The record gives the reactivity of an RNA of 177 nucleotides to DMS and 2A3. The DMS profile rests on 6,771 reads. DMS adducts were read by reverse transcription with MarathonRT. The reactions ran in a buffer of 150 mM KOAc, 10 mM MgCl2 and 150 mM bicine (pH 8.5), at 24 C.
RNA sequence: GGGAACGACUCGAGUAGAGUCGAAAACAGAUGAAUAUGGUAAACCAACAUUAUCUGAGAUCAAAAUGCCCACAAAGCAUCAUUUAGUCCUAGGAAAUGCCGGUGACCCCAAAUAUGUGGAUUUACCUCUAGACGUACAUUUCGAUGUACGUCUAGAAAAAGAAACAACAACAACAAC
Reactivity to DMS in 0.01 (KOAc 150mM, MgCl2 10mM, bicine 150mM(pH8.5), 24C), signal-to-noise 4, nucleotides 027 to 126: c040a030g020a040u030g000a080a030u040a080u000g000g020u020a060a100a120c040c010a020a130c100a040u000u010a050u000c020u000g010a110g010a090u020c110a030a060a070a060u020g030c000c010c040a060c220a070a100a140g020c020a040u010c040a050u020u010u000a130g020u000c010c020u020a060g010g000a040a070a040u020g010c050c080g010g010u020g000a060c070c040c000c040a030a040a070u050a050u010g030u000g000g000a160u010u000u000a050c180c010
Reactivity to 2A3 in 0.01 (KOAc 150mM, MgCl2 10mM, bicine 150mM(pH8.5), 24C), signal-to-noise 6, nucleotides 027 to 126: c040a010g060a040u070g050a080a060u170a060u190g030g000u100a090a050a120c010c010a020a050c020a070u030u060a040u050c020u050g050a030g030a090u080c060a000a070a010a090u080g020c000c010c010a080c070a040a070a000g030c010a020u060c010a020u090u090u130a020g020u020c010c020u020a030g080g000a040a130a040u090g070c050c030g040g000u040g040a060c010c020c000c010a010a110a030u270a050u090g070u030g000g050a060u050u040u070a070c000c010